[RMDB]
RNA sequence: GGGAACGACUCGAGUAGAGUCGAAAAGGUUCAUGGUUCGCCAUGAACCAAAAGUACAGCUAUGAGUACAUGUGUCAUAGCAAAAGAUCGAAAGAUCAAAAAAAAGUAGCUCCUUCGGGAGCUACAACAAUGUUUACAGCUUCGGCUGUAAACAUUGAAAAGAAACAACAACAACAAC
Reactivity to DMS in 0.01 (KOAc 150mM, MgCl2 10mM, bicine 150mM(pH8.5), 24C), signal-to-noise 1, nucleotides 027 to 126: g000g000u000u000c000a000u000g000g010u000u000c230g050c000c010a030u010g020a010a020c000c000a020a000a140a150g000u000a000c000a190g010c000u000a010u000g010a020g020u010a020c050a070u010g020u000g030u000c000a010u000a000g010c000a100a050a040a060g000a000u010c010g000a070a030a180g000a020u020c000a000a000a010a040a030a050a170a160g000u000a010g000c010u000c000c000u000u000c200g020g010g010a000g010c000u000a000c000a070a080
Reactivity to 2A3 in 0.01 (KOAc 150mM, MgCl2 10mM, bicine 150mM(pH8.5), 24C), signal-to-noise 1, nucleotides 027 to 126: g000g010u000u000c000a000u000g010g030u050u060c160g070c060c000a000u000g000a000a000c000c000a000a000a000a000g000u010a010c010a010g000c000u000a000u010g000a000g010u040a030c100a300u210g140u060g000u130c000a010u030a000g030c000a000a000a000a130g000a000u020c010g060a050a030a040g030a010u030c040a000a120a070a000a000a000a000a000g000u000a000g000c000u000c010c000u020u050c150g060g010g000a010g010c000u000a000c000a000a000
Chemical mapping of a 177-nucleotide RNA with DMS and 2A3. The reactions ran in a buffer of 150 mM KOAc, 10 mM MgCl2 and 150 mM bicine (pH 8.5), at 24 C. For DMS the reverse transcriptase was MarathonRT. For 2A3, 2,007 sequencing reads were counted. For DMS, 1,001 sequencing reads were counted.